[RMDB]
RNA sequence: GGGAACGACUCGAGUAGAGUCGAAAAGGUUGAAUCACAGCAGGUCACACCUAAUGACCAUGCUAAUGCCAGAGCUUUUUCGCAUCUGGCCACAAAGUUAAUUGAACAAGAGGUUCCAGCCAACAUCUUAUAUUAAGUUUUUCGAAACUUAAUAUAAAAAAGAAACAACAACAACAAC
Reactivity to 2A3 in 0.01 (KOAc 150mM, MgCl2 10mM, bicine 150mM(pH8.5), 24C), signal-to-noise 8, nucleotides 027 to 126: g020g000u020u030g020a030a020u050c030a050c040a110g000c000a000g010g010u010c000a020c010a030c050c030u060a070a080u060g000a010c000c020a060u020g000c020u080a070a010u150g010c000c000a000g000a010g010c020u150u140u060u130u170c070g010c050a250u020c010u010g000g000c000c000a020c010a010a080a000g020u070u100a080a140u140u140g090a060a030c040a100a070g060a070g120g010u030u000c070c010a010g020c020c000a040a040c020a120u060c030
Reactivity to DMS in 0.01 (KOAc 150mM, MgCl2 10mM, bicine 150mM(pH8.5), 24C), signal-to-noise 6, nucleotides 027 to 126: g020g030u010u000g020a090a050u020c070a080c140a030g020c000a040g000g000u000c010a050c120a150c110c090u020a130a180u010g000a030c010c000a080u000g000c000u000a090a100u020g000c010c010a000g000a070g010c010u000u020u020u050u030c210g010c010a120u000c000u000g000g000c010c170a050c110a060a110a090g000u010u010a070a130u010u020g020a070a050c070a070a100g000a110g010g010u000u020c080c050a040g000c040c030a060a090c160a050u020c050

The data come from the RNA Mapping Database (RMDB), libraries RFM100 and RFMREP. An RNA of 177 nucleotides, treated with 2A3 and DMS and read out base by base. 2A3 adducts were read by reverse transcription with SuperScript II with manganese. The reactions ran in a buffer of 150 mM KOAc, 10 mM MgCl2 and 150 mM bicine (pH 8.5), at 24 C.